Overview: Structure probing data (2A3 and DMS) for a 177-nucleotide construct. It was measured as part of the RMDB library OK2TRN. 2A3 adducts were read by reverse transcription with SuperScript II with manganese. For 2A3, 8,134 sequencing reads were counted. Values cover nucleotides 27 to 126. Conditions: 150 mM KOAc, 10 mM MgCl2 and 150 mM bicine (pH 8.5), 24 C.
RNA sequence: GGGAACGACUCGAGUAGAGUCGAAAAGUAAGCAAAGACGUAAUAACCGUCAUGGUUAGUAAACUGAGCGCAAGCCGUAAGAAAUGCAAACGCGUUAUGAUUCAGAACACAUGGUGCGCUAUUAUAACCAUACUGCUAUGUUCGCAUAGCAGUAUGGAAAAGAAACAACAACAACAAC
Reactivity to 2A3 in 0.01 (KOAc 150mM, MgCl2 10mM, bicine 150mM(pH8.5), 24C), signal-to-noise 5, nucleotides 027 to 126: g040u060a050a050g060c090a090a030a040g070a060c070g010u030a040a050u030a020a040c010c010g020u030c030a030u030g030g000u070u030a040g000u050a060a070a060c020u030g040a010g000c020g000c060a030a010g010c000c030g030u040a060a050g090a160a160a030u150g030c050a070a130a040c070g030c020g020u030u050a130u140g130a110u050u040c010a010g050a090a000c040a000c000a040u020g030g000u020g020c080g000c020u010a030u040u050a030u010a010a030
Reactivity to DMS in 0.01 (KOAc 150mM, MgCl2 10mM, bicine 150mM(pH8.5), 24C), signal-to-noise 7, nucleotides 027 to 126: g020u010a070a120g020c110a070a090a080g010a100c120g010u000a020a020u000a010a020c170c000g010u010c090a040u010g000g000u000u000a070g010u000a050a100a060c030u000g000a070g010c080g010c070a050a200g000c060c120g020u000a070a090g020a070a080a070u010g010c090a060a110a090c100g000c070g010u010u010a070u010g000a180u010u000c050a060g010a070a030c050a050c030a030u000g000g010u000g010c120g030c030u000a020u000u000a030u000a080a160